[RMDB]
RNA sequence: GGGAACGACUCGAGUAGAGUCGAAAAUUCAGCGAUUCGGCGACUUUCGCCGCUUCUGGCAUCAGCGUACCAAAGUUAAGGAUCGCCAGUUUCUCGCCACGACGCUUCACAAUGCCUUUGCCAAUUGCUCAUUGACUUUGUUCGCAAAGUCAAUGAGAAAAGAAACAACAACAACAAC
Reactivity to 2A3 in 0.01 (KOAc 150mM, MgCl2 10mM, bicine 150mM(pH8.5), 24C), signal-to-noise 3, nucleotides 027 to 126: u050u020c040a020g010c000g070a070u030u040c020g040g050c060g040a040c100u190u190u070c090g020c010c020g000c010u040u000c020u050g050g000c020a060u040c050a070g070c020g030u100a100c050c010a090a040a010g040u120u080a070a040g080g000a030u040c030g020c030c000a020g000u000u050u010c040u030c020g030c010c020a050c070g090a030c020g080c040u080u040c050a030c000a080a100u080g010c010c000u070u090u080g000c020c010a090a140u110u140g030
Reactivity to DMS in 0.01 (KOAc 150mM, MgCl2 10mM, bicine 150mM(pH8.5), 24C), signal-to-noise 3, nucleotides 027 to 126: u000u010c110a130g010c020g020a050u010u000c020g020g040c110g020a060c190u000u000u000c130g010c300c030g020c060u000u010c060u010g010g020c070a050u000c210a060g000c050g020u000a130c100c080a040a040a050g020u000u000a090a180g010g010a030u000c020g010c020c040a110g000u000u000u000c040u010c070g020c040c010a080c040g010a090c070g000c050u010u000c050a080c060a070a060u010g010c020c010u000u000u010g000c000c020a050a110u010u000g010